[RMDB]
RNA sequence: GGGAACGACUCGAGUAGAGUCGAAAAUUGUAUCUGAGCACCGUCGCUACGUCGCUCAGCGUAGCGCCAAGCAACUGCUGUCUCCUUCAGGGGACGAGAACGUGCAGCGCCCUAGCGUGCUGGCGAGCAGGAUAAAUACUUUCGAGUAUUUAUCCUGAAAAGAAACAACAACAACAAC
Reactivity to DMS in 0.01 (KOAc 150mM, MgCl2 10mM, bicine 150mM(pH8.5), 24C), signal-to-noise 9, nucleotides 027 to 126: u010u020g020u010a040u010c050u000g010a090g000c030a070c090c090g010u010c030g000c010u000a010c030g000u010c070g000c080u020c120a180g010c030g010u010a030g000c010g020c090c060a100a130g000c050a080a120c040u020g010c040u020g010u000c010u000c010c000u020u040c250a160g010g000g000g000a040c020g010a070g000a100a130c130g020u020g010c030a060g000c130g010c010c030c080u010a100g000c100g020u010g000c020u010g000g000c030g000a120g000
Reactivity to 2A3 in 0.01 (KOAc 150mM, MgCl2 10mM, bicine 150mM(pH8.5), 24C), signal-to-noise 9, nucleotides 027 to 126: u110u090g090u070a090u060c070u070g070a020g040c050a040c070c030g070u060c010g000c010u020a010c010g080u100c020g040c080u050c060a010g000c010g010u020a000g000c000g010c020c010a080a020g030c020a040a110c040u120g020c030u090g050u010c000u000c010c000u180u170c100a120g000g000g020g010a010c050g010a020g010a030a050c070g020u120g070c040a010g000c000g030c010c000c000u060a050g010c040g100u030g000c010u020g030g010c020g010a020g050